[RMDB]
RNA sequence: GGGAACGACUCGAGUAGAGUCGAAAAUUUUUGCUGGUGGUUAUGAUGCACUCGCUUUUCGUAAAGAGCAUGACAGAUUACAAAAGCGAAUUGAUAACCUCAAAUUGGUUAGGGAUCGUUAUGCUACUAUAUGAACAAGUUUCGACUUGUUCAUAUAAAAAGAAACAACAACAACAAC
Reactivity to 2A3 in 0.01 (KOAc 150mM, MgCl2 10mM, bicine 150mM(pH8.5), 24C), signal-to-noise 4, nucleotides 027 to 126: u060u050u010u080u100g040c050u050g020g030u020g010g040u050u060a050u130g120a060u120g060c030a010c030u000c010g010c000u030u020u020u030c020g000u010a020a030a050g090a050g030c010a000u010g020a030c030a060g090a070u000u060a050c030a030a040a020a000g030c030g020a010a020u010u020g040a010u020a030a020c010c000u020c040a100a110a060u090u090g090g010u070u060a080g000g070g000a030u010c010g020u020u020a010u030g010c000u020a060c020
Reactivity to DMS in 0.01 (KOAc 150mM, MgCl2 10mM, bicine 150mM(pH8.5), 24C), signal-to-noise 9, nucleotides 027 to 126: u000u000u000u010u010g020c070u000g010g020u000g010g010u000u000a040u010g010a090u000g010c130a130c120u000c060g020c010u000u000u010u000c180g010u000a040a050a100g010a110g010c020a030u010g000a040c030a120g010a140u010u000a030c020a020a020a030a030g000c010g010a020a070u000u000g010a080u000a040a050c080c060u000c090a040a070a150u000u000g000g010u000u000a110g010g010g010a050u000c030g010u000u000a020u000g010c010u000a090c170
Structure probing data (2A3 and DMS) for a 177-nucleotide construct. DMS adducts were read by reverse transcription with MarathonRT. Source: RMDB library OK2TST, as collected in RNAgym. The DMS profile rests on 22,450 reads.